[RMDB]
RNA sequence: GGGAACGACUCGAGUAGAGUCGAAAACAAGUCAAUGGACGUGUCUCUCGCAGCCGCCUUUGCGCGCAAAUUUUUUAAUAAAUCUCAUUCGACGGAGGGCCUCACGAUGAAGUUGCUGGGAGAUGAGACUGGUAUAAGGCUUCGGCCUUAUACCAGUAAAAGAAACAACAACAACAAC
Reactivity to DMS in 0.01 (KOAc 150mM, MgCl2 10mM, bicine 150mM(pH8.5), 24C), signal-to-noise 2, nucleotides 027 to 126: c040a080a060g010u020c030a080a090u010g020g020a080c060g000u010g000u020c020u000c020u010c040g010c090a030g010c010c050g030c030c040u000u000u000g010c090g020c020g030c140a040a040a000u020u000u000u010u010u020a050a100u020a010a110a050u020c100u000c040a140u010u020c030g000a060c030g000g030a100g000g000g030c000c000u020c130a090c210g040a090u010g000a060a140g000u000u020g010c050u020g000g020g030a030g010a010u030g000a160g020
Reactivity to 2A3 in 0.01 (KOAc 150mM, MgCl2 10mM, bicine 150mM(pH8.5), 24C), signal-to-noise 2, nucleotides 027 to 126: c020a000a060g100u080c010a030a260u130g080g050a010c000g050u040g060u000c000u010c030u000c090g000c030a040g030c000c000g170c090c090u080u130u190g060c010g000c000g060c010a050a050a020u060u200u010u000u080u090a140a060u210a120a070a060u140c140u010c090a080u110u060c050g060a050c000g200g000a030g050g080g010c000c000u060c060a070c010g030a060u150g000a040a060g080u080u060g030c010u010g000g000g040a060g020a000u050g010a020g010